[RMDB]
RNA sequence: GGGAACGACUCGAGUAGAGUCGAAAAAGCUACUUGGGAGGCUGAGGCAAGAGAACUGCUUGAACCCGAGGGGCAGAGGUUGCAGUGAGCUGAGAGUGCGCCAUUGCACUUCAGCCUGUGUGACAGACGCGAGUAUUGAGUUCGCUCAAUACUCGCGAAAAGAAACAACAACAACAAC
Reactivity to 2A3 in 0.01 (KOAc 150mM, MgCl2 10mM, bicine 150mM(pH8.5), 24C), signal-to-noise 1, nucleotides 027 to 126: a000g000c030u030a030c010u060u020g040g040g000a050g070g010c040u000g070a110g070g000c040a150a000g080a000g020a210a020c040u070g050c000u070u050g080a090a080c000c000c020g020a020g040g030g010g000c030a030g040a030g140g030u000u060g000c010a050g050u000g080a050g000c020u000g000a040g000a040g180u050g030c030g050c090c120a140u120u150g000c010a020c050u010u000c000a030g020c000c010u100g070u000g010u000g030a030c020a060g100a060
Reactivity to DMS in 0.01 (KOAc 150mM, MgCl2 10mM, bicine 150mM(pH8.5), 24C), signal-to-noise 2, nucleotides 027 to 126: a120g020c020u000a060c010u000u010g000g020g010a080g010g000c120u000g030a050g000g000c020a060a050g020a150g000a090a110c120u000g020c040u000u000g020a150a200c020c020c000g010a060g000g000g000g000c050a110g000a080g010g000u010u000g000c020a060g000u010g000a150g010c000u020g010a070g000a040g000u000g000c010g000c150c260a150u000u000g000c000a000c000u000u000c010a000g010c000c020u000g070u000g010u000g000a070c060a060g000a150
This 177-nucleotide RNA was probed chemically with 2A3 and DMS. Conditions: 150 mM KOAc, 10 mM MgCl2 and 150 mM bicine (pH 8.5), 24 C. For DMS the reverse transcriptase was MarathonRT.